The record gives the reactivity of an RNA of 177 nucleotides to 2A3 and DMS. For 2A3 the reverse transcriptase was SuperScript II with manganese. For DMS, 1,528 sequencing reads were counted.

RNA sequence: GGGAACGACUCGAGUAGAGUCGAAAAGGCUUGGCGCUGACCAGGCACCACCACAUGGACUGGUCGCACGCGAUUCGGUUCGAACAGGAGACCCUCGACGCCGGUGGUGAUCUGAUCGUGGGGCUGACCUGCACUAAUCGUUCGCGAUUAGUGCAGGAAAAGAAACAACAACAACAAC
Reactivity to 2A3 in 0.01 (KOAc 150mM, MgCl2 10mM, bicine 150mM(pH8.5), 24C), signal-to-noise 2, nucleotides 027 to 126: g040g010c050u070u080g040g050c080g130c230u150g040a110c020c000a010g040g000c000a040c010c000a020c010c000a000c030a150u290g010g030a020c010u020g000g000u040c030g000c020a070c110g100c030g110a120u260u280c070g000g050u030u080c000g000a040a060c110a070g030g050a020g070a040c000c040c000u020c020g050a080c050g090c100c030g040g010u050g010g000u050g020a170u020c040u030g020a050u020c020g030u070g000g020g010g000c000u030g040a090
Reactivity to DMS in 0.01 (KOAc 150mM, MgCl2 10mM, bicine 150mM(pH8.5), 24C), signal-to-noise 2, nucleotides 027 to 126: g020g000c030u000u010g020g030c060g000c130u020g000a060c040c000a020g000g010c030a040c010c040a080c030c010a170c240a170u000g010g020a020c010u000g010g010u000c000g000c040a110c270g000c050g000a040u010u020c060g050g010u000u000c050g010a130a110c260a150g010g030a160g000a170c020c010c030u000c000g020a120c140g010c110c080g000g020u000g010g020u010g000a040u010c040u000g020a050u000c030g000u010g000g000g000g000c030u050g000a090